[RMDB]
RNA sequence: GGGAACGACUCGAGUAGAGUCGAAAAUCUUUCCAAUAUCUGUAACAUGUCCUAUCUCAUGACCUAUUCCCCAUCCAAAUAAGUUUCCUCCUGUAGCUUUUCCACUAUCAUCUAUUUGGAAAGGUACCAGGUAAAUGCUGUUCGCAGCAUUUACCUGAAAAGAAACAACAACAACAAC
Reactivity to DMS in 0.01 (KOAc 150mM, MgCl2 10mM, bicine 150mM(pH8.5), 24C), signal-to-noise 2, nucleotides 027 to 126: u020c040u000u000u000c000c000a120a170u040a070u030c040u030g020u010a110a050c070a050u030g050u010c000c010u000a070u010c020u000c000a030u000g000a040c000c050u020a090u040u030c000c000c000c130a000u000c060c190a080a100a040u010a020a170g000u000u000u070c030c020u020c070c000u000g010u000a150g030c010u040u000u000u030c040c050a060c210u010a090u020c180a110u010c220u010a090u000u000u000g000g030a000a030a010g020g020u080a100c120
Reactivity to 2A3 in 0.01 (KOAc 150mM, MgCl2 10mM, bicine 150mM(pH8.5), 24C), signal-to-noise 5, nucleotides 027 to 126: u020c000u040u050u000c020c010a060a060u130a070u120c070u130g110u110a060a050c030a140u050g040u070c000c000u060a110u090c020u040c040a050u080g020a030c000c010u050a100u020u050c020c000c000c020a040u070c020c020a020a070a090u140a190a000g010u010u020u020c010c020u050c010c040u050g030u090a060g040c020u060u030u020u000c020c010a020c040u070a070u100c050a030u030c060u120a150u130u100u070g030g000a030a000a000g030g020u010a040c010